[RMDB]
An RNA of 177 nucleotides, treated with DMS and read out base by base.
The DMS profile rests on 981 reads.
Reactivities are given for positions 27 through 126.
For DMS the reverse transcriptase was MarathonRT.
RNA sequence: GGGAACGACUCGAGUAGAGUCGAAAACAGAGUUGAUGGGAAAACACUGAUCUUCAGGAGGGGUUUUUUCAGUGCCAGCGUCCCUCUGGAUGUGUAGGCAGAUAAGAAGGUGGCUCGGACACAGUCCCCUGCCGUACUGAUUCGUCAGUACGGCAGGAAAAGAAACAACAACAACAAC
Reactivity to DMS in 0.01 (KOAc 150mM, MgCl2 10mM, bicine 150mM(pH8.5), 24C), signal-to-noise 1, nucleotides 027 to 126: c030a120g000a110g040u000u000g000a040u020g010g010g000a040a080a040a050c070a110c030u000g000a080u010c100u000u000c120a110g010g040a120g000g000g020g000u000u010u010u000u000u000c080a060g010u000g020c010c010a080g000c120g030u000c010c000c210u020c150u020g000g050a090u000g020u000g040u000a050g010g000c010a070g020a070u020a070a120g000a050a080g010g000u000g020g020c050u000c080g000g000a040c070a080c100a070g020u000c020c040